[RMDB]
RNA sequence: GGGAACGACUCGAGUAGAGUCGAAAAGAUAUGGAUGGGUUCAGCUUUUGACGCGUUAACACUCGGAAACGAGUGUACACGCGAUAAGCUGACCCAUCCUAAGUCAAAACCUAAGUUCGCUUAGGAAUCCGAUAGGAGAGUUCGCUCUCCUAUCGGAAAAAGAAACAACAACAACAAC
Reactivity to 2A3 in 0.01 (KOAc 150mM, MgCl2 10mM, bicine 150mM(pH8.5), 24C), signal-to-noise 1, nucleotides 027 to 126: g000a010u070a010u090g000g000a000u020g000g000g040u210u300c000a000g000c020u110u110u200u300g280a090c060g000c010g000u000u060a060a010c000a000c000u000c030g010g040a010a110a060c000g000a010g000u010g000u030a000c030a000c040g010c000g030a010u010a010a000g000c000u000g010a000c010c000c000a000u020c000c000u010a000a000g000u000c000a020a050a120a090c000c010u020a010a000g040u020u230c300g000c110u000u000a010g010g020a020a060
Reactivity to DMS in 0.01 (KOAc 150mM, MgCl2 10mM, bicine 150mM(pH8.5), 24C), signal-to-noise 1, nucleotides 027 to 126: g000a040u000a300u010g010g000a000u000g000g030g000u000u020c010a000g000c010u010u000u000u000g020a240c010g000c000g000u000u000a300a060c000a000c020u000c020g020g000a160a070a220c040g000a010g020u000g020u030a050c270a010c010g090c000g010a040u000a010a010g000c010u000g010a040c000c000c040a000u010c030c000u000a000a090g010u000c010a120a150a140a170c010c000u000a040a020g000u000u020c300g000c000u000u000a010g000g010a090a130